[RMDB]
RNA sequence: GGGAACGACUCGAGUAGAGUCGAAAAUGUUUUUGUCGAUGAUAUUGUCAAGACAGACCCCGUCAUUUUGAUGGAGCGUUAUGUGUCAUUGGCUAUUGAUGCAUACCCCUUGUCCAAGCAUGAGAAUCCAGAAUACCGUAAGGUUUUCUACGCUCUCACCGUCUUUAGAAUUCGUUCUAAAGACGGUAAAAGAAACAACAACAACAAC
Reactivity to 2A3 in 0.01 (KOAc 150mM, MgCl2 10mM, bicine 150mM(pH8.5), 24C), signal-to-noise 5, nucleotides 027 to 156: u050g030u030u080u020u060u070g060u030c050g040a060u050g020a040u070a090u140u230g040u050c030a050a020g020a020c010a020g020a050c010c000c010c000g050u050c060a140u080u170u140u300g040a030u050g020g010a070g030c070g020u040u040a070u140g060u010g020u010c040a130u000u060g070g010c020u100a070u050u070g070a040u080g010c010a010u030a090c010c020c000c000u030u040g050u010c060c040a110a050g020c050a110u070g010a020g040a070a060u070c080c030a030g020a040a020u030a090c000c010g070u160a060a130g010g020u010u000u010u020c000u010a030c100g020c020u000c000u010c020
Reactivity to DMS in 0.01 (KOAc 150mM, MgCl2 10mM, bicine 150mM(pH8.5), 24C), signal-to-noise 3, nucleotides 027 to 156: u000g010u000u000u000u000u010g010u000c000g010a090u010g010a070u000a110u000u000g010u000c040a100a140g000a070c050a110g000a220c000c010c000c000g020u010c020a260u000u000u000u000g020a040u010g010g020a020g050c020g040u010u000a080u000g010u000g020u010c010a080u000u010g010g020c110u000a090u000u010g020a060u010g010c000a060u000a090c050c020c030c050u000u010g000u010c040c030a070a160g020c050a100u000g010a100g010a060a110u000c060c060a090g010a100a050u000a050c030c010g020u010a120a190g010g020u000u000u010u000c030u000a080c040g010c050u010c020u000c030
The record gives the reactivity of an RNA of 207 nucleotides to 2A3 and DMS. The RNA was probed in 150 mM KOAc, 10 mM MgCl2 and 150 mM bicine (pH 8.5) at 24 C. DMS adducts were read by reverse transcription with MarathonRT.